Conditions: 150 mM KOAc, 10 mM MgCl2 and 150 mM bicine (pH 8.5), 24 C.
Chemical mapping of a 177-nucleotide RNA with 2A3 and DMS.
The DMS profile rests on 3,865 reads.
The 2A3 profile rests on 2,537 reads.
The data come from the RNA Mapping Database (RMDB), library OK2TRN.

RNA sequence: GGGAACGACUCGAGUAGAGUCGAAAAGAAAUGUCGAGCAUUGUUCUUUUGAGCAAGGAGGACUAAUAGGGCAACAGUUUGGGCACCUAAUGCUACUUAGCUAAGCUAUCUUACCACGGGCUGUUAGGUUGAGGAGUUAUUUCGAUAACUCCUCAACAAAAGAAACAACAACAACAAC
Reactivity to 2A3 in 0.01 (KOAc 150mM, MgCl2 10mM, bicine 150mM(pH8.5), 24C), signal-to-noise 3, nucleotides 027 to 126: g070a040a080a030u130g010u060c070g010a030g100c090a080u040u020g000u040u020c020u040u140u080u150g020a010g000c050a030a020g090g020a030g010g020a030c040u050a050a140u050a130g040g030g000c030a040a030c030a080g030u060u060u070g010g000g020c030a040c050c020u030a070a020u050g000c020u020a060c030u080u060a030g020c010u040a030a040g010c000u030a010u140c020u030u060a050c030c030a030c060g000g020g000c030u050g040u130u050a040g010
Reactivity to DMS in 0.01 (KOAc 150mM, MgCl2 10mM, bicine 150mM(pH8.5), 24C), signal-to-noise 4, nucleotides 027 to 126: g000a070a110a090u000g010u000c060g000a130g010c080a070u010u000g000u000u000c020u000u000u010u000g010a050g010c030a060a040g010g030a120g000g010a060c060u000a050a070u010a080g020g000g000c050a060a050c090a040g020u000u000u000g020g000g000c050a060c090c050u000a030a080u010g020c040u010a060c060u000u000a050g010c040u000a070a100g000c040u000a060u000c040u010u000a160c050c040a090c110g000g000g010c020u000g000u000u000a040g010

High DMS reactivity at an A or C suggests that its Watson-Crick edge is free.